[RMDB]
RNA sequence: GGGAACGACUCGAGUAGAGUCGAAAAUGGCUUCGUCCUACGUCGCGAUUUGGACGCCAGAACCAUGUUUGUUCAAAUCUUCGGUCCGCAAGGAGAGAAGCUCUUUGGCAAACACCUUCCUUUCAACUAAAGAAACUACUUUCGAGUAGUUUCUUUAAAAAGAAACAACAACAACAAC
Reactivity to DMS in 0.01 (KOAc 150mM, MgCl2 10mM, bicine 150mM(pH8.5), 24C), signal-to-noise 9, nucleotides 027 to 126: u010g000g020c100u010u010c090g000u000c020c000u010a090c090g010u020c120g010c210g010a140u010u010u000g010g000a020c020g000c200c180a040g010a090a150c070c050a100u000g010u000u000u000g010u000u040c020a000a030a010u030c000u000u000c010g000g010u000c010c000g010c300a080a180g000g000a020g000a280g000a000a000g010c010u000c010u000u000u000g000g000c010a010a010a010c020a080c160c100u000u000c020c020u010u020u010c100a070a160c220
Reactivity to 2A3 in 0.01 (KOAc 150mM, MgCl2 10mM, bicine 150mM(pH8.5), 24C), signal-to-noise 9, nucleotides 027 to 126: u040g010g010c010u090u070c060g010u000c010c010u020a030c030g170u150c100g020c090g150a160u080u090u110g020g000a010c010g010c020c030a020g010a030a030c030c030a030u060g020u010u020u030g060u090u180c030a060a070a300u300c010u030u010c040g270g060u010c010c000g030c060a080a040g010g000a050g000a010g000a010a000g000c000u010c010u000u000u010g000g000c000a010a000a000c010a010c010c040u050u070c010c000u060u100u110c070a090a070c060
Description: Structure probing data (DMS and 2A3) for a 177-nucleotide construct. The data come from the RNA Mapping Database (RMDB), libraries RFM100 and RFMREP. As a SHAPE reagent, 2A3 marks flexible, mostly unpaired nucleotides at the ribose 2'-OH.